[RMDB]
RNA sequence: GGGAACGACUCGAGUAGAGUCGAAAACAUGACUAUUGAGCCCUCUUCAACAACGGUUCCUGCAUGGACAGCCUUGCCAUUAUCCUUAUGAACAGCUAAUGACUCUCCAGUCAUGGAGGCUUCAUUGGAGGGAUUAGUCAUUCGUGACUAAUCCCUCAAAAGAAACAACAACAACAAC
Reactivity to DMS in 0.01 (KOAc 150mM, MgCl2 10mM, bicine 150mM(pH8.5), 24C), signal-to-noise 3, nucleotides 027 to 126: c060a070u000g010a100c090u010a150u010u030g020a150g020c040c020c020u010c030u000u000c050a030a080c120a110a120c160g020g010u000u010c060c030u010g040c130a020u010g010g010a060c080a120g040c030c050u000u010g000c020c000a050u000u020a090u010c050c030u000u040a050u010g000a080a070c150a080g010c070u030a120a040u000g000a040c150u010c040u000c120c110a100g000u010c170a060u010g000g000a070g020g000c090u000u000c000a020u000u010g000
Reactivity to 2A3 in 0.01 (KOAc 150mM, MgCl2 10mM, bicine 150mM(pH8.5), 24C), signal-to-noise 7, nucleotides 027 to 126: c030a060u160g050a050c050u160a120u140u140g050a050g010c020c020c000u050c010u100u070c050a130a160c030a050a030c100g040g000u030u020c020c000u030g020c030a100u100g060g030a050c030a000g040c010c000u040u030g010c010c010a060u060u080a080u090c020c010u120u110a070u090g050a110a040c030a060g040c030u080a080a010u020g020a050c000u000c000u010c130c030a040g050u070c020a040u030g040g070a060g020g030c010u020u020c030a050u010u070g110

Source: RMDB library OK1LIB, as collected in RNAgym. An RNA of 177 nucleotides, treated with DMS and 2A3 and read out base by base. Reactivities are given for positions 27 through 126. The 2A3 profile rests on 4,922 reads. The DMS profile rests on 2,755 reads. The RNA was probed in 150 mM KOAc, 10 mM MgCl2 and 150 mM bicine (pH 8.5) at 24 C. 2A3 adducts were read by reverse transcription with SuperScript II with manganese. DMS adducts were read by reverse transcription with MarathonRT.